[RMDB]
RNA sequence: GGGAACGACUCGAGUAGAGUCGAAAAACGAGGUUAAGCUUUGAACCUGAAGGGUUGUUUGGCAUCAAAAAAAGAAGGGAAAAGAUCAUUAGUAAUGAUGCUACUGAUAAAGUCUUUUACACCUCUACCGUACGGGAUUAUUCGUAAUCCCGUACGGAAAAGAAACAACAACAACAAC
Reactivity to DMS in 0.01 (KOAc 150mM, MgCl2 10mM, bicine 150mM(pH8.5), 24C), signal-to-noise 1, nucleotides 027 to 126: a120c160g010a000g010g000u000u000a070a160g000c040u020u000u000g010a110a020c010c030u000g010a150a220g000g000g000u010u010g000u000u010u010g000g000c080a020u020c030a000a000a020a050a030a030a170g040a100a050g070g000g000a060a010a000a100g010a010u010c110a040u000u000a000g000u000a070a120u010g000a040u010g000c050u000a030c030u000g000a020u000a070a060a180g000u010c000u000u000u000u000a070c100a070c000c000u010c030u000a160